[RMDB]
RNA sequence: GGGAACGACUCGAGUAGAGUCGAAAAAUGCGGCCUUCGCUGCGCAGACCGAGGACGAGGUCGACAUCGAGGACGUCCGCAAGCUGGCUCGGGCAGCCAAGGAUGUCCUGCAGGCCCGCAAAGCCAGGGCAAGAUCUAGAUUCGUCUAGAUCUUGCCAAAAGAAACAACAACAACAAC
Reactivity to DMS in 0.01 (KOAc 150mM, MgCl2 10mM, bicine 150mM(pH8.5), 24C), signal-to-noise 3, nucleotides 027 to 126: a090u000g010c030g020g010c030c020u010u030c090g020c070u000g010c070g010c070a080g010a030c010c000g010a200g000g020a120c140g030a130g010g000u000c000g000a300c020a030u000c030g010a020g000g000a040c030g000u000c000c000g030c240a120a130g000c020u010g000g010c030u010c120g010g000g000c030a030g000c030c080a090a130g000g000a050u000g000u000c010c000u000g000c150a100g020g000c060c000c040g030c140a040a090a100g000c010c030a080g020
Reactivity to 2A3 in 0.01 (KOAc 150mM, MgCl2 10mM, bicine 150mM(pH8.5), 24C), signal-to-noise 2, nucleotides 027 to 126: a000u050g000c000g000g020c000c000u060u070c050g010c030u050g020c160g010c060a060g020a040c020c000g050a120g170g100a090c110g070a040g050g000u020c010g030a060c010a040u050c040g010a010g020g020a020c040g000u030c000c000g050c100a010a050g000c000u050g160g030c020u060c140g130g160g000c020a010g030c030c010a020a030g020g010a030u090g010u060c000c010u010g000c030a010g000g080c040c070c050g000c010a060a000a030g080c010c010a020g000

Structure probing data (DMS and 2A3) for a 177-nucleotide construct. For 2A3, 2,142 sequencing reads were counted. The reactions ran in a buffer of 150 mM KOAc, 10 mM MgCl2 and 150 mM bicine (pH 8.5), at 24 C. For 2A3 the reverse transcriptase was SuperScript II with manganese. For DMS, 1,857 sequencing reads were counted. It was measured as part of the RMDB library OK2TST. Values are in units of 0.01, from 0 to 300, in steps of 10.